[RMDB]
Conditions: 150 mM KOAc, 10 mM MgCl2 and 150 mM bicine (pH 8.5), 24 C.
Chemical mapping of a 207-nucleotide RNA with 2A3 and DMS.
The data come from the RNA Mapping Database (RMDB), library RNAMAK.
RNA sequence: GGGAACGACUCGAGUAGAGUCGAAAACAAACAUUCGUGUUUGCUACAUCCUAAGUCAAGCCGUUUGACGUCAUUUGUCAGCCAUACAUCGGAAACGAUGUAUGGCUUGGAUUUAAUGACCGAGGCUUGAUAUGGAAAAAUGCGGUUUCGACCGCAACAUCCAGAGUCAAUUCGUUGACUCUGGAUGAAAAGAAACAACAACAACAAC
Reactivity to 2A3 in 0.01 (KOAc 150mM, MgCl2 10mM, bicine 150mM(pH8.5), 24C), signal-to-noise 2, nucleotides 027 to 156: c010a010a020a010c010a030u110u110c250g090u030g010u010u010u020g050c020u070a060c020a110u070c030c000u040a140a010g010u000c000a000a000g000c000c050g090u050u230u280g080a110c020g010u000c010a010u010u000u020g010u010c000a000g000c000c000a000u010a000c000a000u000c030g000g070a070a040a050c000g000a000u000g010u000a000u010g000g010c000u000u010g010g010a000u040u070u140a010a000u000g000a000c000c010g030a010g010g010c000u010u000g000a000u000a020u020g020g000a040a020a080a080a090u070g000c010g000g000u000u070u160c200g110a050c010c000g000c010a000a010
Reactivity to DMS in 0.01 (KOAc 150mM, MgCl2 10mM, bicine 150mM(pH8.5), 24C), signal-to-noise 2, nucleotides 027 to 156: c000a020a020a020c000a100u000u020c270g070u000g010u000u000u000g010c030u020a120c130a230u000c010c010u000a070a280g020u010c000a010a010g000c000c010g010u000u010u010g030a120c090g000u010c000a040u000u000u000g010u000c010a040g000c000c000a010u000a000c000a000u000c000g050g000a180a220a300c020g000a010u010g030u000a000u010g000g040c000u000u010g000g000a000u000u000u000a040a000u000g000a010c010c000g020a090g020g010c000u000u000g030a010u000a150u000g020g030a050a050a100a130a150u000g000c000g010g000u000u000u000c180g010a020c010c010g040c000a030a040